The record gives the reactivity of an RNA of 177 nucleotides to 2A3 and DMS. For 2A3, 1,656 sequencing reads were counted. For DMS the reverse transcriptase was MarathonRT.
[RMDB]
RNA sequence: GGGAACGACUCGAGUAGAGUCGAAAAUAGGAAACAUUUGGUAGGAAUCUUGGGCCUCUAUCAUUCCAUGAAUCUUUCCAUGCUAUGCCAGUUAUGAGGCUUCAUUCAGGAAUGUCUAAAAUGCGGCCAUUUACUCAAGCUUCGGCUUGAGUAAAUGAAAAGAAACAACAACAACAAC
Reactivity to 2A3 in 0.01 (KOAc 150mM, MgCl2 10mM, bicine 150mM(pH8.5), 24C), signal-to-noise 2, nucleotides 027 to 126: u120a000g050g000a090a070a030c040a070u060u020u090g090g030u090a050g000g040a080a050u000c010u030u070g070g040g030c000c010u000c020u080a070u090c010a000u030u030c030c020a030u050g000a000a050u020c020u030u080u000c040c020a010u030g010c010u110a050u170g090c060c070a000g000u100u130a080u120g070a020g000g000c000u010u030c030a030u060u030c030a000g030g030a030a020u040g030u000c020u130a020a120a080a030u100g020c020g010g000c020
Reactivity to DMS in 0.01 (KOAc 150mM, MgCl2 10mM, bicine 150mM(pH8.5), 24C), signal-to-noise 4, nucleotides 027 to 126: u010a090g010g010a050a070a080c110a020u000u000u000g010g010u010a070g010g010a070a060u010c080u000u000g000g010g000c040c030u010c040u000a070u000c030a030u010u000c010c020a090u010g000a030a040u000c070u000u000u000c070c040a090u000g010c070u000a080u020g010c110c070a110g010u000u000a080u010g010a080g020g010c040u000u000c060a060u000u010c130a050g000g000a030a030u000g010u000c140u000a040a060a050a060u000g010c240g000g000c030